[RMDB]
RNA sequence: GGGAACGACUCGAGUAGAGUCGAAAAGAUAUGGAGGUUCGAUAAGUCCCUAUCGGAAACGAUAGAGGACUUUUGACGGGGCCUCCUAAGUCAAACCAACCUGAGUAGUUCGCUACUCAGGUUGGAACCAAAUGUAUCCGUUCGCGGAUACAUUUGGAAAAGAAACAACAACAACAAC
Reactivity to DMS in 0.01 (KOAc 150mM, MgCl2 10mM, bicine 150mM(pH8.5), 24C), signal-to-noise 2, nucleotides 027 to 126: g000a030u000a300u000g010g010a020g010g010u010u010c010g020a110u000a020a010g020u000c000c000c000u000a010u000c000g010g000a090a100a120c010g000a010u010a000g010a160g030g000a000c000u000u000u000u000g000a190c220g000g000g000g010c000c000u000c000c010u010a010a010g000u000c020a110a100a270c000c000a000a010c000c000u000g010a010g000u000a000g010u000u000c260g000c000u010a000c000u000c000a000g000g000u000u000g000g000a010a110
Reactivity to 2A3 in 0.01 (KOAc 150mM, MgCl2 10mM, bicine 150mM(pH8.5), 24C), signal-to-noise 1, nucleotides 027 to 126: g040a020u050a050u140g030g000a010g000g000u010u030c030g030a060u030a180a020g020u010c020c010c000u000a000u010c020g030g040a140a050a010c050g000a000u010a010g150a170g030g010a010c080u020u000u000u010g040a020c050g060g020g050g050c040c000u000c010c000u020a050a000g010u000c030a020a030a100c000c000a000a000c010c000u000g020a000g000u000a000g000u090u130c300g000c180u010a000c000u000c010a000g000g010u000u000g010g010a000a000
This 177-nucleotide RNA was probed chemically with DMS and 2A3. Values cover nucleotides 27 to 126. DMS (dimethyl sulfate) methylates the pairing face of unpaired adenines and cytosines.